An RNA of 177 nucleotides, treated with DMS and 2A3 and read out base by base.
RNA sequence: GGGAACGACUCGAGUAGAGUCGAAAAGAUAUGGAAUACGUAGCCGCAAAGCGAUGAAAUCGGAAACGAUGGAGCUUUGACCCGGUGAAGUAUUCCUAAGUCAAAUCCACUGGUUCGCCAGUGGAAACAAGUGUAUGUGGUUCGCCACAUACACUUGAAAAGAAACAACAACAACAAC
Reactivity to DMS in 0.01 (KOAc 150mM, MgCl2 10mM, bicine 150mM(pH8.5), 24C), signal-to-noise 6, nucleotides 027 to 126: g010a010u000a300u000g010g000a000a010u000a010c010g010u000a300g010c000c020g020c020a010a000a000g010c000g010a090u030g000a070a130a010u000c000g020g000a160a080a140c010g000a020u000g000g000a070g010c000u000u000u000g020a120c250c240c090g000g040u000g010a110a300g010u000a000u000u000c000c000u010a010a080g000u000c040a080a080a110u000c000c000a010c010u000g000g000u000u010c270g000c000c000a020g010u000g000g000a010a050a130
Reactivity to 2A3 in 0.01 (KOAc 150mM, MgCl2 10mM, bicine 150mM(pH8.5), 24C), signal-to-noise 3, nucleotides 027 to 126: g020a000u060a040u160g000g000a000a020u010a000c020g020u100a000g000c010c010g000c010a000a010a000g010c040g170a280u060g010a040a030a000u010c020g020g020a090a050a030c010g010a010u020g010g040a020g000c000u070u010u010g040a120c100c050c020g010g000u030g070a060a000g000u000a000u000u010c000c000u010a050a000g040u000c020a080a020a100u010c000c000a000c000u010g000g070u050u080c300g090c080c000a000g000u010g000g010a030a000a010
The DMS profile rests on 5,215 reads. The reactions ran in a buffer of 150 mM KOAc, 10 mM MgCl2 and 150 mM bicine (pH 8.5), at 24 C. Source: RMDB library TTRDEL, as collected in RNAgym. DMS adducts were read by reverse transcription with MarathonRT.